[RMDB]
RNA sequence: GGGAACGACUCGAGUAGAGUCGAAAAGCGGGGCUUGAAACGCGGGUAGCGCGCACGCCCGGCGAAGAAGUUCGCAUACGCGGUGUGCUGGUGACGAAGUGUCUGCUGCAACGGCACGCUCGACACCUAGAACAUACCGUAUUCGUACGGUAUGUAACACCACAACUCCUUUCGAGGAGUUGUGGUGAAAAGAAACAACAACAACAAC
Reactivity to DMS in 0.01 (KOAc 150mM, MgCl2 10mM, bicine 150mM(pH8.5), 24C), signal-to-noise 1, nucleotides 027 to 156: g060c060g000g010g030g050c010u010u000g000a080a160a020c020g000c060g020g000g040u020a180g090c090g040c030g000c010a060c070g040c000c010c050g060g000c010g000a000a080g000a230a250g000u000u000c040g070c020a130u030a250c000g000c060g080g010u000g020u000g030c040u010g000g020u000g030a130c010g000a010a080g000u000g000u030c000u000g020c050u000g020c140a090a210c220g010g000c000a050c020g020c090u000c000g020a130c000a010c010c010u070a110g010a150a050c000a010u000a000c000c000g000u000a030u020u000c250g010u000a030c000g000g010u000a000u000g030u000a030a150
Reactivity to 2A3 in 0.01 (KOAc 150mM, MgCl2 10mM, bicine 150mM(pH8.5), 24C), signal-to-noise 3, nucleotides 027 to 156: g010c050g010g000g030g040c030u050u080g120a090a100a050c030g020c060g010g060g050u170a080g060c020g000c000g020c070a020c000g020c000c010c020g020g010c010g010a010a000g050a090a010g240u040u040c020g000c000a050u040a260c090g010c110g070g010u020g000u000g000c030u030g040g020u040g000a040c000g020a030a020g000u020g000u010c040u060g070c020u080g040c070a090a000c060g000g000c000a000c000g030c090u010c000g000a010c010a020c010c000u000a070g040a110a000c000a000u010a010c000c000g000u010a000u000u100c130g040u000a000c000g000g000u000a000u000g000u000a020a010
An RNA of 207 nucleotides, treated with DMS and 2A3 and read out base by base. The data come from the RNA Mapping Database (RMDB), library M2RFOK.